An RNA of 207 nucleotides, treated with DMS and 2A3 and read out base by base. Values cover nucleotides 27 to 156. Conditions: 150 mM KOAc, 10 mM MgCl2 and 150 mM bicine (pH 8.5), 24 C. 2A3 adducts were read by reverse transcription with SuperScript II with manganese.
[RMDB]
RNA sequence: GGGAACGACUCGAGUAGAGUCGAAAACUCUUUUACUCGGCAUGAUACCACCGUUAUCGGGUCAACAGAGUAGUUUCAAAUGACAACAAUGCUCAGGGUUAUGCUCUCGCUGCCUAAUGGCGGUGCGCGGACGACUCAAUGUUCGCAUUGAGUCGAAUAACAUGCAGUUGUUCGCAACUGCAUGUUAAAAAGAAACAACAACAACAAC
Reactivity to DMS in 0.01 (KOAc 150mM, MgCl2 10mM, bicine 150mM(pH8.5), 24C), signal-to-noise 2, nucleotides 027 to 156: c040u000c020u020u000u000u010a070c020u000c020g000g000c040a160u000g010a170u010a060c030c020a220c010c030g020u010u000a040u020c040g020g000g010u000c020a100a080c040a050g000a050g020u010a040g000u000u000u000c050a080a110a170u000g010a140c060a070a100c080a090a100u000g000c060u000c030a170g010g010g010u000u000a030u010g030c010u000c020u000c080g020c010u000g030c040c000u000a090a120u000g010g000c020g020g000u010g030c070g020c080g020g020a140c010g000a020c010u000c020a010a040u000g000u000u010c270g010c000a020u000u010g020a090g020u000c000g000a040a080
Reactivity to 2A3 in 0.01 (KOAc 150mM, MgCl2 10mM, bicine 150mM(pH8.5), 24C), signal-to-noise 3, nucleotides 027 to 156: c030u060c010u060u150u070u150a100c060u050c050g060g000c100a110u120g020a060u120a130c000c010a010c000c020g060u050u010a030u060c050g010g000g020u040c000a020a020c040a010g020a010g020u050a020g020u050u090u040c100a100a130a110u120g030a050c020a160a020c040a110a140u160g010c050u020c030a020g030g020g010u110u040a050u090g000c010u000c010u000c060g050c080u050g020c020c020u120a160a080u140g010g000c000g000g000u030g010c100g000c040g050g050a050c010g010a000c000u000c000a000a010u040g020u080u060c160g000c090a000u000u000g000a000g000u000c010g000a010a000